[RMDB]
RNA sequence: GGGAACGACUCGAGUAGAGUCGAAAAUACUUACGCACUCACCACUAGGGAAGUAAGUCCUGUUCAGGGUCAGGCCCGGUUAAUGCUUUAUUAUUUUCUAGUUAUGACAUUUGUGAUGCUAAUUGUUUAUAGCAACAGACAAGAAACCUAUGCAGACCAUUUAGCACCUCUUCGGAGGUGCUAAAUGAAAAGAAACAACAACAACAAC
Reactivity to 2A3 in 0.01 (KOAc 150mM, MgCl2 10mM, bicine 150mM(pH8.5), 24C), signal-to-noise 2, nucleotides 027 to 156: u100a000c010u080u080a000c010g040c020a060c030u090c010a140c070c040a160c260u170a090g010g000g020a070a010g010u090a000a070g010u000c010c010u070g000u050u100c090a000g010g000g120u010c040a030g030g030c010c010c000g010g010u030u060a030a000u060g010c020u070u090u080a050u180u060a060u130u190u030u010c060u060a060g010u080u070a070u140g030a010c030a100u030u210u120g040u020g060a050u030g030c020u040a110a080u100u070g030u090u160u100a050u020a010g000c040a010a060c030a090g060a020c040a070a000g040a030a100a000c000c000u060a100u070g010c060a000g000a060c000
Reactivity to DMS in 0.01 (KOAc 150mM, MgCl2 10mM, bicine 150mM(pH8.5), 24C), signal-to-noise 1, nucleotides 027 to 156: u000a090c030u000u000a070c120g020c070a130c040u000c040a100c060c050a080c030u000a070g050g030g010a090a090g010u000a000a060g030u000c030c020u010g020u000u000c050a090g020g020g030u000c040a150g010g040c050c040c050g020g010u000u000a110a140u000g010c020u010u000u000a060u010u000a070u000u020u000u010c070u000a110g000u030u000a050u000g020a080c010a090u000u000u010g020u000g020a150u000g030c010u000a050a110u000u000g000u000u010u010a150u060a120g040c020a040a050c030a110g000a110c030a070a090g000a090a080a060c040c030u000a060u010g110c040a100g010a090c200